[RMDB]
RNA sequence: GGGAACGACUCGAGUAGAGUCGAAAAAGGCUAGGAGCAAGCUGACGGCGUUCGGCUCGCACCGGGUAGGCGAGCAGCGAUGCCUGCUCAGCUUGUCUUGUGGCUUUAGCAGUCAGCAGCUUCUGAGGCCGCAAGCUACGUUCGCGUGGUUUGCGGCAAAAGAAACAACAACAACAAC
Reactivity to DMS in 0.01 (KOAc 150mM, MgCl2 10mM, bicine 150mM(pH8.5), 24C), signal-to-noise 4, nucleotides 027 to 126: a030g000g000c000u000a040g000g000a030g000c010a010a010g020c000u000g000a020c040g000g010c000g000u010u000c030g000g010c000u000c010g000c010a070c070c070g000g010g000u030a090g000g000c000g000a010g000c000a040g010c090g020a030u010g000c020c010u020g010c160u000c010a010g000c000u000u000g000u050c000u000u010g000u000g000g000c000u010u000u000a060g010c040a070g010u010c060a100g000c130a110g000c050u000u000c020u010g000a300g000
Reactivity to 2A3 in 0.01 (KOAc 150mM, MgCl2 10mM, bicine 150mM(pH8.5), 24C), signal-to-noise 5, nucleotides 027 to 126: a000g070g010c040u060a030g120g000a010g020c010a020a010g000c000u000g000a000c000g000g000c000g000u000u010c000g010g000c010u010c020g010c010a100c040c070g080g060g080u090a060g010g050c000g000a000g000c000a000g030c010g040a010u040g000c000c010u020g010c040u010c010a010g010c000u010u000g010u070c000u020u040g090u010g000g000c000u020u010u030a040g000c030a010g040u110c020a020g000c010a010g010c020u040u000c010u030g040a050g130

Structure probing data (DMS and 2A3) for a 177-nucleotide construct. For DMS, 19,652 sequencing reads were counted. For 2A3, 19,703 sequencing reads were counted.